RNA sequence: GGGAACGACUCGAGUAGAGUCGAAAAUGGCCUGAUCACAGACAACCCCAACCUCAACCAUGUGCUGGCCCAGUUGCGCACGGUCAGCGAGGAGCUGGUGAAGCGCAAGAACGAAUUGGCCGAUGUAAUUGGACUUUAGGUUCGCCUAAAGUCCAAUAAAAGAAACAACAACAACAAC
Reactivity to 2A3 in 0.01 (KOAc 150mM, MgCl2 10mM, bicine 150mM(pH8.5), 24C), signal-to-noise 7, nucleotides 027 to 126: u120g050g010c020c010u060g020a080u090c030a030c030a090g080a060c030a050a170c010c000c000c010a030a060c010c030u100c030a050a120c050c050a120u120g050u090g080c030u040g030g000c000c020c010a040g030u030u030g010c020g010c020a040c150g080g010u020c000a010g010c000g010a040g070g050a020g000c020u020g000g040u080g080a120a030g000c010g000c010a000a030g030a040a020c090g030a050a060u130u130g030g000c000c010g010a020u130g050u110a130
Reactivity to DMS in 0.01 (KOAc 150mM, MgCl2 10mM, bicine 150mM(pH8.5), 24C), signal-to-noise 5, nucleotides 027 to 126: u040g000g010c020c010u010g020a090u030c030a050c110a080g010a110c130a110a140c050c010c010c060a090a090c040c030u020c040a080a160c090c080a120u030g020u020g010c040u010g000g000c030c010c080a110g000u010u000g010c030g000c020a080c150g000g000u000c010a010g000c020g000a070g030g010a300g000c010u030g000g010u020g020a160a220g010c010g000c020a020a050g020a100a080c050g020a060a150u030u010g000g010c000c020g000a110u020g010u020a080